[RMDB]
RNA sequence: GGGAACGACUCGAGUAGAGUCGAAAACGCGCGCCAUCGAUCGUACCUAGUCACAGGCCUGAGCGCAGCGCGUAUGUCAGUACACGCGUACCAGCAUGAUAUGCGCGGCCGAUCUCGUAUCGGCGCGGACGACCACGGUGUUCGCACCGUGGUCGUCAAAAGAAACAACAACAACAAC
Reactivity to DMS in 0.01 (KOAc 150mM, MgCl2 10mM, bicine 150mM(pH8.5), 24C), signal-to-noise 2, nucleotides 027 to 126: c120g000c090g060c030g010c030c030a070u010c060g000a060u040c090g020u010a130c010c040u000a040g000u030c240a130c240a060g000g030c080c080u000g010a090g000c070g030c200a100g010c000g070c010g010u000a000u000g000u000c090a070g010u000a110c070a070c120g030c030g000u040a050c030c110a150g020c130a080u000g000a070u000a070u010g000c030g030c020g000g000c090c020g000a000u000c050u000c250g030u000a000u010c080g030g010c010g020c050g050
Reactivity to 2A3 in 0.01 (KOAc 150mM, MgCl2 10mM, bicine 150mM(pH8.5), 24C), signal-to-noise 2, nucleotides 027 to 126: c050g050c000g010c000g000c000c030a070u100c020g020a030u090c020g030u030a080c020c030u100a110g130u160c100a040c040a150g000g000c000c050u110g080a060g000c130g000c090a060g000c040g000c000g000u020a020u020g010u010c030a030g060u050a090c100a000c200g140c050g040u100a130c060c010a040g090c030a050u080g020a020u060a040u180g000c000g000c000g000g010c010c010g020a010u000c090u040c130g010u110a030u040c030g030g000c050g040c010g000